[RMDB]
RNA sequence: GGGAACGACUCGAGUAGAGUCGAAAAGUGCUGGGAUUAUAGGCGUGAGCCAUCACACCCAGCCAUAUUACCAUUUUUUUUUUUUUUUUGAGAUGGAGUCUAGCUCUGUCGCCCAGGCUGGAGUGCAACGUCUGACUAAUUUCGAUUAGUCAGACGUAAAAGAAACAACAACAACAAC
Reactivity to 2A3 in 0.01 (KOAc 150mM, MgCl2 10mM, bicine 150mM(pH8.5), 24C), signal-to-noise 1, nucleotides 027 to 126: g140u140g010c010u020g030g010g030a060u050u080a070u230a250g000g000c030g010u100g050a020g000c020c000a010u070c010a020c010a040c000c010c020a010g000c020c000a010u050a010u010u090a090c000c000a000u000u000u010u000u000u000u000u000u000u010u170u260u080u030u010u030g040a050g000a000u020g070g000a010g020u000c060u080a010g020c020u000c000u070g050u040c010g010c010c020c000a010g050g000c010u060g010g020a010g020u030g060c000a000
Reactivity to DMS in 0.01 (KOAc 150mM, MgCl2 10mM, bicine 150mM(pH8.5), 24C), signal-to-noise 2, nucleotides 027 to 126: g010u000g040c000u000g000g010g010a160u010u010a130u010a140g030g010c010g000u030g010a230g010c010c010a050u010c230a110c300a100c000c000c000a010g020c000c030a040u000a050u010u000a140c040c000a010u000u000u010u000u000u000u000u000u000u000u080u010u030u000u000u010g000a040g000a030u000g000g010a130g010u000c100u000a080g000c010u010c020u000g000u000c070g000c040c040c020a020g010g010c000u000g000g000a010g010u000g000c110a090
An RNA of 177 nucleotides, treated with 2A3 and DMS and read out base by base. Values cover nucleotides 27 to 126. It was measured as part of the RMDB library OK2TRN. The 2A3 profile rests on 1,660 reads. Conditions: 150 mM KOAc, 10 mM MgCl2 and 150 mM bicine (pH 8.5), 24 C. 2A3 adducts were read by reverse transcription with SuperScript II with manganese. The DMS profile rests on 2,135 reads.